[RMDB]
RNA sequence: GGGAACGACUCGAGUAGAGUCGAAAAUUAGGGUUUUGUACCGGAGAGGGAGCCUGAGAGAUUGCUCCCACGUCCAAGGACGGCAGCAGGCGCGAAAAUUGCCCACUCUUUGCAGGAGGCAGUUAUGAACUAAUGUCUCGUUCGCGAGACAUUAGUUAAAAGAAACAACAACAACAAC
Reactivity to 2A3 in 0.01 (KOAc 150mM, MgCl2 10mM, bicine 150mM(pH8.5), 24C), signal-to-noise 2, nucleotides 027 to 126: u130u130a030g000g010g020u070u030u010u080g100u040a050c030c040g000g020a100g010a040g030g040g000a020g010c030c020u200g020a050g000a030g030a140u140u110g030c000u000c000c000c000a020c000g030u000c000c030a010a050g040g000a020c010g020g030c000a030g010c020a040g120g000c020g000c050g050a000a080a000a020u040u060g060c030c010c010a070c020u050c020u050u160u100g020c020a040g000g090a020g000g000c000a000g020u020u010a170u270g040
Reactivity to DMS in 0.01 (KOAc 150mM, MgCl2 10mM, bicine 150mM(pH8.5), 24C), signal-to-noise 3, nucleotides 027 to 126: u020u020a050g010g020g000u000u010u000u010g020u000a060c050c010g000g000a180g010a140g010g030g010a010g020c000c120u000g010a180g000a070g020a200u010u010g000c020u000c000c010c000a040c080g010u000c040c050a100a130g000g010a070c070g020g000c050a050g010c040a050g000g010c040g030c070g010a070a040a020a030u000u000g010c000c000c120a130c020u000c040u030u030u020g010c110a070g010g000a270g000g000c040a000g020u000u010a070u020g010